Conditions: 150 mM KOAc, 10 mM MgCl2 and 150 mM bicine (pH 8.5), 24 C.
This 177-nucleotide RNA was probed chemically with DMS and 2A3.
Values cover nucleotides 27 to 126.

RNA sequence: GGGAACGACUCGAGUAGAGUCGAAAACAAAGUCUGUUCGCAGACUUUGAAACCUGAUAUAAUCGUCAGGAAAGGUGAAUACACCUUCUUAAGCAGAUUAUAAAAGGACGCCGUUCGCGGCGUCCAACAUCUUAUAUCGGUUCGCCGAUAUAAGAUGAAAAGAAACAACAACAACAAC
Reactivity to DMS in 0.01 (KOAc 150mM, MgCl2 10mM, bicine 150mM(pH8.5), 24C), signal-to-noise 3, nucleotides 027 to 126: c010a000a000a000g010u000c000u010g000u000u010c180g020c010a010g000a020c000u010u000u020g000a080a080a180c000c000u010g010a150u000a030u000a010a000u000c000g010u000c080a090g000g000a040a020a020g020g010u010g020a300a160u010a130c010a000c000c000u000u000c010u000u010a080a190g010c060a150g010a010u010u000a020u000a020a070a120a190g010g000a010c010g000c000c000g050u000u000c160g010c000g040g000c010g020u000c010c000a040a090
Reactivity to 2A3 in 0.01 (KOAc 150mM, MgCl2 10mM, bicine 150mM(pH8.5), 24C), signal-to-noise 2, nucleotides 027 to 126: c000a000a010a000g010u010c000u010g020u030u080c160g000c100a010g010a000c000u000u000u020g000a030a010a010c000c000u030g060a010u010a010u000a160a000u020c020g070u060c050a010g040g000a110a060a010g020g010u040g030a220a090u200a250c010a000c010c000u010u010c010u060u050a070a030g050c050a060g030a010u030u010a010u020a040a090a020a030g000g000a000c000g000c010c000g040u040u060c250g010c020g090g040c000g000u000c000c000a000a000

Source: RMDB library M2PK50, as collected in RNAgym.